[RMDB]
RNA sequence: GGGAACGACUCGAGUAGAGUCGAAAAGAACCCCCGACGACCCCGACACCACGUUCGUCUCAAUGGGCAACUACAUUUUCACGACCAAGGUGCUUAUCGACGCGAUUCGCGCCGACGCCGACGACGAGUUCAUGACAUCAUUCGUGAUGUCAUGAACAAAAGAAACAACAACAACAAC
Reactivity to 2A3 in 0.01 (KOAc 150mM, MgCl2 10mM, bicine 150mM(pH8.5), 24C), signal-to-noise 1, nucleotides 027 to 126: g070a070a140c030c010c010c030c010g020a030c060g010a030c060c000c030c000g000a030c000a030c050c000a040c030g010u070u000c020g040u000c000u000c030a060a070u070g060g010g010c010a010a050c020u120a010c020a070u070u080u060u120c090a090c110g010a040c050c020a050a050g000g000u000g000c030u060u080a070u040c020g080a070c050g110c040g220a210u200u210c040g000c000g000c000c020g000a000c020g030c020c010g090a010c010g020a010c010g030a010
Reactivity to DMS in 0.01 (KOAc 150mM, MgCl2 10mM, bicine 150mM(pH8.5), 24C), signal-to-noise 2, nucleotides 027 to 126: g040a210a180c030c010c000c060c030g000a050c050g010a100c030c000c010c030g020a140c070a050c020c070a100c190g020u010u000c010g000u010c040u010c060a040a120u000g000g010g000c050a030a050c060u010a090c060a060u010u000u010u000c040a120c070g020a050c060c060a090a160g000g010u000g010c090u000u010a090u000c010g000a020c080g070c010g000a200u020u020c060g010c020g010c010c010g000a040c150g040c000c010g000a080c070g000a080c090g010a210
Chemical mapping of a 177-nucleotide RNA with 2A3 and DMS. The 2A3 profile rests on 1,333 reads. For 2A3 the reverse transcriptase was SuperScript II with manganese.